[RMDB]
RNA sequence: GGGAACGACUCGAGUAGAGUCGAAAACUGACCAGCCGUUGCCGGAUGCAGACCUGACCUGGUACACGGAUGGUAGCAGCUUCAUCCGUAACGGAGAGAGAAAGGCCGGAGCCGCAGUAACAACCGAACGAGCUCUUAAUUUCGAUUAAGAGCUCGUAAAAGAAACAACAACAACAAC
Reactivity to 2A3 in 0.01 (KOAc 150mM, MgCl2 10mM, bicine 150mM(pH8.5), 24C), signal-to-noise 3, nucleotides 027 to 126: c020u050g040a050c000c050a040g000c000c010g020u030u040g060c060c040g000g000a030u020g080c030a020g030a160c030c060u070g050a040c000c000u060g000g040u130a090c030a010c140g100g010a030u030g000g050u070a060g040c030a000g000c000u080u030c010a010u000c010c010g010u040a030a050c070g040g000a030g000a010g000a010g020a040a110a000g030g000c040c020g030g000a010g010c000c020g050c010a000g030u030a030a070c050a060a040c010c030g040a020
Reactivity to DMS in 0.01 (KOAc 150mM, MgCl2 10mM, bicine 150mM(pH8.5), 24C), signal-to-noise 2, nucleotides 027 to 126: c050u000g000a150c010c050a140g000c000c010g000u000u000g020c030c030g080g020a100u010g000c050a060g010a110c120c020u020g000a070c070c000u030g040g000u000a090c140a030c060g000g060a040u000g010g020u000a070g000c050a050g000c030u010u030c010a030u010c010c040g020u020a100a110c050g000g000a050g010a100g000a110g030a100a060a110g000g000c000c010g030g000a070g040c020c070g000c040a020g020u030a090a050c150a100a050c070c090g020a090
The record gives the reactivity of an RNA of 177 nucleotides to 2A3 and DMS. The data come from the RNA Mapping Database (RMDB), library OK1LIB. 2A3 adducts were read by reverse transcription with SuperScript II with manganese. The RNA was probed in 150 mM KOAc, 10 mM MgCl2 and 150 mM bicine (pH 8.5) at 24 C.